This 207-nucleotide RNA was probed chemically with DMS. For DMS, 2,398 sequencing reads were counted.

[RMDB]
RNA sequence: GGGAACGACUCGAGUAGAGUCGAAAAUCUAUACGAUUCGUCGUAUAGAAAAAAAGAUAUGGAUUUGUAGGCCGAUAAGCUCCUAUCGGAAACGAUAGUGAGCUUUUGACGGCUGAGGAAUCCUAAGUCAAAAAAGAUGUUAGUUCGCUAACAUCAAGAUGACUGUACUGUUCGCAGUACAGUCAUCAAAAGAAACAACAACAACAAC
Reactivity to DMS in 0.01 (KOAc 150mM, MgCl2 10mM, bicine 150mM(pH8.5), 24C), signal-to-noise 1, nucleotides 027 to 156: u020c020u000a000u000a000c010g020a020u000u010c220g040u000c010g000u000a000u000a080g030a000a010a020a120a090a110a170g030a030u000a190u010g020g010a030u000u000u000g010u020a300g000g020c000c000g000a070u000a030a030g000c010u000c010c000u000a000u000c010g010g000a070a090a120c000g030a010u000a000g020u010g000a030g000c000u000u000u000u000g010a250c030g000g060c030u000g000a230g000g000a000a020u000c010c000u000a050a130g000u020c020a000a070a040a170a120a170g000a050u000g010u000u000a000g020u000u030c300g000c000u010a020a000c000a000u000c000a060a140

The RNA was probed in 150 mM KOAc, 10 mM MgCl2 and 150 mM bicine (pH 8.5) at 24 C.